Record summary
Conditions: 150 mM KOAc, 10 mM MgCl2 and 150 mM bicine (pH 8.5), 24 C. Structure probing data (2A3) for a 207-nucleotide construct. Reactivities are given for positions 27 through 156.

RNA sequence: GGGAACGACUCGAGUAGAGUCGAAAAGGUCGCACAGAAUGACAGGACUGAAGUAACUUAGCUCCAAUUUCUGUCUUCAUAAUCACUGUCCUACCAUUGUCUGUGCUUAGAAUCUACUUGCUUAAUGCAGGAACAUGUGUUCUCACAGAGAUGGAAAGGAGUCGCUAAUUUUCGAAUUAGCGACUCCAAAAGAAACAACAACAACAAC
Reactivity to 2A3 in 0.01 (KOAc 150mM, MgCl2 10mM, bicine 150mM(pH8.5), 24C), signal-to-noise 2, nucleotides 027 to 156: g070g000u030c050g000c060a040c040a060g050a010a060u180g050a040c030a070g000g010a000c020u000g040a020a040g110u120a140a110c110u120u120a090g030c070u040c050c020a090a100u030u000u000c000u000g010u000c000u070u040c030a070u220a110a070u080c060a020c100u060g020u070c000c000u010a090c000c000a000u030u100g230u240c020u000g000u000g010c050u040u080a010g000a010a000u010c000u000a040c010u060u020g010c030u170u260a130a060u300g010c000a050g030g030a160a010c090a150u170g130u000g020u160u000c020u010c010a020c020a000g040a020g000a020u000g000g000a040a110a160